[RMDB]
RNA sequence: GGGAACGACUCGAGUAGAGUCGAAAAAAUGCCGCCUCAGUUCCAAGCUCUUUCGUGGCACUGUAAACAGUCCUAUUGAGUUAGGGGCAGUCAGCCACGUUGCGAAGCUAAAUUAUCUGGUCGAGAGUUACGAUUCCCUACUUCGGUAGGGAAUCAAUGUCACUAACGUAUUCGUACGUUAGUGACAAAAAGAAACAACAACAACAAC
Reactivity to 2A3 in 0.01 (KOAc 150mM, MgCl2 10mM, bicine 150mM(pH8.5), 24C), signal-to-noise 1, nucleotides 027 to 156: a010a010u090g080c010c020g000c030c020u050c010a070g020u090u020c010c030a000a010g000c010u000c000u110u010u040c040g030u060g000g000c040a030c040u000g000u060a080a190a070c040a120g140u130c020c010u020a020u000u100g120a160g300u120u020a020g000g020g030g000c000a000g030u070c070a000g000c020c000a010c000g000u000u050g020c060g070a050a000g000c010u040a000a060a060u200u190a120u030c030u040g000g070u040c060g050a010g000a000g020u090u150a100c010g010a030u000u010c000c010c000u000a000c010u030u030c140g040g000u000a000g000g000g000a000a000u000c000a000a000
Reactivity to DMS in 0.01 (KOAc 150mM, MgCl2 10mM, bicine 150mM(pH8.5), 24C), signal-to-noise 1, nucleotides 027 to 156: a110a060u010g000c000c010g050c020c000u000c050a060g000u020u000c040c060a220a300g000c010u000c020u000u000u000c040g080u000g050g050c060a160c000u000g020u000a040a160a050c020a190g000u000c000c000u000a050u000u000g010a220g010u020u000a020g020g030g010g000c040a030g010u010c090a120g050c030c020a030c040g020u000u000g040c000g000a080a090g040c000u000a020a060a080u000u000a090u000c020u030g000g010u000c040g030a140g000a180g000u010u000a160c000g000a060u000u000c000c000c000u010a000c030u000u020c260g060g020u010a010g020g010g040a000a000u000c010a000a070